[RMDB]
RNA sequence: GGGAACGACUCGAGUAGAGUCGAAAAGAUCUGCGCCACGUACGAUCAGAGUACGGUACACAGUCAGCGCCUGAGGUACUGCGUACGCGAUCGCAGCGCGGUACCGUACGCGGCCAGUAGGCCGCGGCAGUGGGCGAGCAUUCGUGCUCGCCCACUGAAAAGAAACAACAACAACAAC
Reactivity to DMS in 0.01 (KOAc 150mM, MgCl2 10mM, bicine 150mM(pH8.5), 24C), signal-to-noise 1, nucleotides 027 to 126: g000a050u000c000u010g020c020g010c110c050a220c040g000u000a060c020g010a200u000c140a060g010a200g000u000a030c020g030g010u010a050c200a040c020a020g010u010c050a100g020c100g020c160c010u000g000a100g000g000u000a010c020u000g000c000g030u020a060c160g000c030g010a140u010c060g020c000a290g000c000g000c010g000g010u000a040c020c040g040u000a010c010g020c000g010g010c000c000a100g000u000a090g020g000c000c010g010c000g000g000
Reactivity to 2A3 in 0.01 (KOAc 150mM, MgCl2 10mM, bicine 150mM(pH8.5), 24C), signal-to-noise 1, nucleotides 027 to 126: g020a140u090c020u050g010c070g060c080c050a100c000g050u070a000c040g000a140u190c000a010g090a040g240u020a030c000g000g010u020a010c070a000c010a020g060u070c020a000g000c010g040c100c020u090g050a100g030g020u000a010c000u010g050c020g030u030a110c050g000c030g170a250u250c170g000c030a030g000c010g000c050g000g010u000a040c020c010g000u020a030c000g030c070g010g000c000c000a090g220u220a220g110g000c000c030g000c050g000g000